[RMDB]
Source information
The data come from the RNA Mapping Database (RMDB), library OK3TST. This 207-nucleotide RNA was probed chemically with 2A3. Reactivities are given for positions 27 through 156. The RNA was probed in 150 mM KOAc, 10 mM MgCl2 and 150 mM bicine (pH 8.5) at 24 C.
RNA sequence: GGGAACGACUCGAGUAGAGUCGAAAAGAUGAAGUCUAUGGCAUGGUUAAUGGCAUUAUACCAAUAUUAACUUCUUGAUUUUUAUAAUUGUACCAUGGUCAUAAACGAUGUUAACACUAGGGGAAAGUGGGUGAAGAGCAUAUAGAAACUCUGUGUACUAGGCACUGAUGUUCGCAUCAGUGCCUAGAAAAGAAACAACAACAACAAC
Reactivity to 2A3 in 0.01 (KOAc 150mM, MgCl2 10mM, bicine 150mM(pH8.5), 24C), signal-to-noise 1, nucleotides 027 to 156: g030a070u120g040a080a000g070u040c040u030a000u040g060g000c020a010u040g050g050u030u100a060a050u080g100g000c030a020u020u080a030u070a040c000c020a040a070u050a030u160u080a080a070c090u130u140c000u110u030g020a070u160u100u020u000u020a020u050a060a130u040u100g020u020a020c000c000a020u070g140g000u070c010a000u000a010a090a000c070g040a070u080g050u020u020a090a000c000a000c150u040a020g000g000g000g000a040a100a010g040u090g000g010g010u010g040a110a050g020a000g040c000a010u100a020u040a160g100a170a080a080c020u020c000u050g130u130g000u240a050